[RMDB]
RNA sequence: GGGAACGACUCGAGUAGAGUCGAAAAGAUAUGGAUAACGGGAGAUUACCAUCGGAAACGAUGGCGGAUCGAGGAUCGUUCAUCCUAAGUCAAAAGUCGGUAGAAUCGUUCGCGAUUCUACCGACAAGAGACUAUCUAACUUCGGUUAGAUAGUCUCAAAAGAAACAACAACAACAAC
Reactivity to 2A3 in 0.01 (KOAc 150mM, MgCl2 10mM, bicine 150mM(pH8.5), 24C), signal-to-noise 2, nucleotides 027 to 126: g030a010u060a020u110g000g000a010u000a010a020c010g000g000g030a030g010a010u000u020a020c000c000a000u000c010g020g020a030a040a030c030g000a000u010g030g010c110g160g000a010u000c020g050a190g020g030a010u010c000g000u030u040c050a000u000c000c000u040a160a050g060u040c030a070a040a040a140g000u010c010g000g000u010a020g000a010a010u000c020g070u130u150c300g010c000g150a010u000u010c000u000a000c000c000g000a000c000a010a000
Reactivity to DMS in 0.01 (KOAc 150mM, MgCl2 10mM, bicine 150mM(pH8.5), 24C), signal-to-noise 2, nucleotides 027 to 126: g000a030u000a300u000g000g010a020u010a030a010c010g000g000g000a030g020a020u000u000a090c010c000a010u000c010g000g010a110a080a170c010g020a020u000g000g000c020g000g000a000u000c000g010a160g050g000a020u000c000g000u000u000c210a020u000c010c000u000a040a130g000u010c030a110a090a110a080g000u000c000g020g000u000a050g020a000a000u010c010g030u000u010c280g020c050g010a000u000u010c010u000a000c000c000g000a000c010a030a060